[RMDB]
Record summary:
Structure probing data (2A3 and DMS) for a 177-nucleotide construct. For 2A3, 2,829 sequencing reads were counted. The reactions ran in a buffer of 150 mM KOAc, 10 mM MgCl2 and 150 mM bicine (pH 8.5), at 24 C. For DMS, 1,165 sequencing reads were counted. Values cover nucleotides 27 to 126.
RNA sequence: GGGAACGACUCGAGUAGAGUCGAAAAGAUAUGGACGAUUAACCUCCGAUAAGCUACAUUCGGAAACGAAUGUUAGCUUUUGACGGAGGAGAUCGUCCUAAGUCAAAACUAGAGCUUCGGCUCUAGAGCAAGAUAACCAGUUCGCUGGUUAUCUUGCAAAAGAAACAACAACAACAAC
Reactivity to 2A3 in 0.01 (KOAc 150mM, MgCl2 10mM, bicine 150mM(pH8.5), 24C), signal-to-noise 2, nucleotides 027 to 126: g040a000u050a010u170g000g000a000c020g000a010u090u140a300a300c010c000u000c030c030g100a120u050a270a000g000c010u000a010c000a000u020u000c000g050g000a090a070a070c000g000a010a000u010g000u160u100a000g000c000u000u000u000u040g030a020c030g000g000a000g000g000a010g010a000u000c000g000u000c000c000u000a040a000g000u010c030a030a000a110a160c010u000a010g000a010g000c020u080u100c300g160g000c040u040c000u000a000g000a020
Reactivity to DMS in 0.01 (KOAc 150mM, MgCl2 10mM, bicine 150mM(pH8.5), 24C), signal-to-noise 1, nucleotides 027 to 126: g010a070u000a300u010g010g000a000c010g000a010u000u030a090a200c020c000u010c000c010g010a210u000a030a010g010c010u000a030c000a030u000u000c000g000g000a060a080a190c000g000a000a000u000g000u000u000a010g000c000u000u000u000u000g000a280c140g010g010a010g040g000a210g000a030u000c000g000u000c000c000u000a000a040g000u000c020a130a050a110a210c010u000a000g000a020g000c030u010u020c290g000g000c000u000c000u000a000g000a070